[RMDB]
RNA sequence: GGGAACGACUCGAGUAGAGUCGAAAAAAGUGAUUAUUCGUAAUCACUUCACGCCGGGCGCGGUGGCGCGUGCCUGUUGUCCCAGCUACUCGGGAGGCUAAACGACGUACCCGUUCGCGGGUACGAAGGUUAGUUGUCGUUUCGACGACAACUAACCAAAAGAAACAACAACAACAAC
Reactivity to DMS in 0.01 (KOAc 150mM, MgCl2 10mM, bicine 150mM(pH8.5), 24C), signal-to-noise 1, nucleotides 027 to 126: a020a000g030u000g000a030u010u000a010u020u020c160g020u010a010a000u020c000a000c000u000u000c130a140c180g010c020c000g010g010g030c010g010c000g020g020u000g010g000c020g000c000g000u010g010c000c000u010g020u000u000g010u000c000c000c020a030g020c000u000a100c060u000c060g000g000g000a060g010g010c000u020a020a060a100c180g010a270c030g000u000a000c010c010c000g030u000u010c180g020c010g000g000g010u000a000c010g010a040a040
Reactivity to 2A3 in 0.01 (KOAc 150mM, MgCl2 10mM, bicine 150mM(pH8.5), 24C), signal-to-noise 2, nucleotides 027 to 126: a010a010g010u000g000a030u000u020a010u020u090c240g050u040a010a000u000c010a010c000u050u050c100a090c070g000c000c020g010g010g010c010g020c010g000g000u020g030g020c000g000c000g020u020g000c000c000u040g070u130u050g010u010c010c000c000a010g020c060u300a220c050u130c080g010g000g000a020g020g000c020u090a140a090a020c110g120a010c020g020u000a010c000c020c000g020u000u040c300g040c020g030g000g000u020a000c020g000a030a000
An RNA of 177 nucleotides, treated with DMS and 2A3 and read out base by base. For 2A3, 1,749 sequencing reads were counted. The reactions ran in a buffer of 150 mM KOAc, 10 mM MgCl2 and 150 mM bicine (pH 8.5), at 24 C. In probing experiments dimethyl sulfate is read out at A N1 and C N3, which are open when not base-paired. For DMS, 1,382 sequencing reads were counted. Reactivities are given for positions 27 through 126. For DMS the reverse transcriptase was MarathonRT.